[RMDB]
RNA sequence: GGGAACGACUCGAGUAGAGUCGAAAAGAAGUACUGUUCGCAGUACUUCAAACGGCAACGGCAAGGCCAAGCCGAAGCCGAACGGCAAGCCGAAGGGCAAAAAAACCGUUCCCUUCGGGGAACGGAACUAACAGUAUCCGUUCGCGGAUACUGUUAGAAAAGAAACAACAACAACAAC
Reactivity to 2A3 in 0.01 (KOAc 150mM, MgCl2 10mM, bicine 150mM(pH8.5), 24C), signal-to-noise 2, nucleotides 027 to 126: g010a000a000g000u000a000c000u010g050u050u120c260g000c090a010g000u000a000c000u000u000c000a000a010a010c010g010g000c000a040a000c010g010g000c040a090a080g230g090c050c030a020a020g010c000c010g000a010a000g000c010c000g020a040a030c030g080g010c060a080a050g010c040c010g040a080a070g110g000g000c000a060a040a000a020a010a010a070c010c010g000u010u000c010c010c000u000u020c230g030g000g010g010a010a000c010g000g020a010a010
Reactivity to DMS in 0.01 (KOAc 150mM, MgCl2 10mM, bicine 150mM(pH8.5), 24C), signal-to-noise 3, nucleotides 027 to 126: g010a020a000g010u000a010c000u000g010u000u010c210g060c020a010g010u000a000c000u000u000c000a020a090a160c030g020g010c030a020a300c010g010g010c000a060a140g010g000c100c170a110a120g000c000c000g000a050a300g010c000c000g000a030a090c160g010g030c090a100a150g020c020c020g020a090a070g010g030g010c030a000a000a020a090a080a110a050c000c000g010u000u010c000c000c000u000u010c200g000g000g000g000a020a000c000g000g010a000a050
This 177-nucleotide RNA was probed chemically with 2A3 and DMS.
For DMS the reverse transcriptase was MarathonRT.
For 2A3 the reverse transcriptase was SuperScript II with manganese.
The reactions ran in a buffer of 150 mM KOAc, 10 mM MgCl2 and 150 mM bicine (pH 8.5), at 24 C.
The data come from the RNA Mapping Database (RMDB), library M2PK50.